[RMDB]
RNA sequence: GGGAACGACUCGAGUAGAGUCGAAAAUCGAACGGAGCUUCGGCUCCGUUCGAAAAAACCGUAGGGAUCUGACAGAGCUGUGGUUCGAAAGAGCCAUACAGCGACGAAGUCAGGAUCCCUAAACGGAAAAAGGUGUGAUUCUUCGGAAUCACACCAAUAACUUCAUAAGAUUCGUCUUAUGAAGUUAAAAAGAAACAACAACAACAAC
Reactivity to 2A3 in 0.01 (KOAc 150mM, MgCl2 10mM, bicine 150mM(pH8.5), 24C), signal-to-noise 1, nucleotides 027 to 156: u030c000g000a010a000c000g010g010a020g020c010u060u150c300g150g000c090u060c010c000g040u000u010c000g000a010a010a010a010a010a010c000c010g000u010a000g010g020g010a000u000c000u000g000a010c000a020g010a000g000c000u010g000u000g020g000u030u000c000g000a070a030a030g000a000g050c030c000a050u120a020c010a010g000c000g050a060c030g030a030a000g000u000c020a010g030g040a000u000c000c000c000u010a000a010a000c010g050g100a050a090a080a120a050g000g020u000g000u000g000a030u010u000c010u050u130c300g060g000a000a000u010c010a010c010a010c010c000a000a000
Reactivity to DMS in 0.01 (KOAc 150mM, MgCl2 10mM, bicine 150mM(pH8.5), 24C), signal-to-noise 1, nucleotides 027 to 156: u000c010g010a050a110c030g020g000a030g030c060u000u000c300g060g040c000u030c000c010g000u000u000c010g010a010a060a040a100a050a090c000c010g030u020a030g000g010g010a020u000c010u010g020a030c010a080g000a300g000c010u010g030u000g010g020u000u010c000g010a110a130a170g000a020g000c000c000a090u010a090c040a040g010c000g000a260c150g000a110a160g020u000c020a040g020g020a050u000c000c000c010u000a000a000a040c020g000g030a020a070a070a120a050g040g030u000g020u000g010a040u010u000c020u000u000c300g040g000a040a020u000c010a000c000a000c000c000a020a010